[RMDB]
An RNA of 170 nucleotides, treated with 2A3 and DMS and read out base by base. The 2A3 profile rests on 73,290 reads. DMS adducts were read by reverse transcription with MarathonRT. The data come from the RNA Mapping Database (RMDB), library 15KLIB. For 2A3 the reverse transcriptase was SuperScript II with manganese. The RNA was probed in 150 mM KOAc, 10 mM MgCl2 and 150 mM bicine (pH 8.5) at 24 C.
RNA sequence: GGGAACGACUCGAGUAGAGUCGAAAACUGGAGGUACCAGUAGCGGAGAUGCCACCACUGCAUAUGCCAAUAGUGUCUUUAACAUUUUGCAGGCGACAACUGCUAAUGUCAGUGCACUUAUGGGUGCUAACGGAUACGUUCGCGUAUCCGAAAAGAAACAACAACAACAAC
Reactivity to 2A3 in 0.01 (KOAc 150mM, MgCl2 10mM, bicine 150mM(pH8.5), 24C), signal-to-noise 9, nucleotides 027 to 129: c020u020g030g030a070g070g080u120a090c020c010a020g010u020a020g030c040g030g050a090g010a060u110g040c010c010a030c010c000a050c030u060g000c040a030u060a040u180g060c010c000a050a030u050a060g030u030g020u030c010u030u140u090a030a010c010a030u020u040u040u160g000c000a000g040g040c060g140a060c060a120a050c020u000g000c000u020a020a010u010g010u030c030a020g040u020g150c000a000c000u080u070a060u130g090g010g010u030g010c010u050a120a030
Reactivity to DMS in 0.01 (KOAc 150mM, MgCl2 10mM, bicine 150mM(pH8.5), 24C), signal-to-noise 9, nucleotides 027 to 129: c000u010g010g010a100g000g020u020a070c040c020a070g030u010a010g010c030g020g020a040g020a120u030g030c060c020a080c010c000a030c050u030g020c040a030u050a090u060g030c030c040a050a250u010a020g030u030g030u050c030u000u010u010a110a050c020a020u010u020u030u020g000c000a020g010g030c130g040a080c240a080a110c000u010g010c010u000a010a010u020g000u000c130a030g050u000g000c000a000c000u030u040a090u070g030g010g000u020g000c030u040a060a170